[RMDB]
RNA sequence: GGGAACGACUCGAGUAGAGUCGAAAAAAUCAUUGUGAACAACAAGCAACUGGAUGCGGACAACAACAAUGCCUAUUAUGAGUUUAUAGUAACUGCCAAGGACAAGGGUGAACCGCCCAAAUCAGGAAAUAUACAGUGCGUUCGCGCACUGUAUAUUAAAAGAAACAACAACAACAAC
Reactivity to DMS in 0.01 (KOAc 150mM, MgCl2 10mM, bicine 150mM(pH8.5), 24C), signal-to-noise 3, nucleotides 027 to 126: a080a040u000c020a080u000u000g020u000g010a100a100c120a080a030c070a110a090g020c040a060a060c100u000g000g000a080u000g010c060g010g020a060c070a050a040c040a060a030c090a040a050u010g020c030c020u000a090u010u000a080u010g010a080g010u000u000u010a050u000a090g020u010a030a070c060u000g000c040c030a080a050g000g000a030c050a070a090g030g020g030u000g000a050a090c060c060g010c020c030c010a020a070a070u000c060a090g000g010a100
Reactivity to 2A3 in 0.01 (KOAc 150mM, MgCl2 10mM, bicine 150mM(pH8.5), 24C), signal-to-noise 2, nucleotides 027 to 126: a000a000u160c070a030u160u040g020u040g040a150a040c060a030a010c030a130a050g030c030a050a060c050u060g080g050a020u090g090c010g000g020a010c020a110a000c000a000a000c010a010a140u080g010c000c000u110a160u260u050a090u170g120a040g080u060u060u080a170u060a030g100u070a030a010c020u030g010c040c000a030a000g000g000a050c030a040a030g040g000g020u070g050a080a000c010c010g050c000c000c010a010a060a020u110c050a030g040g050a050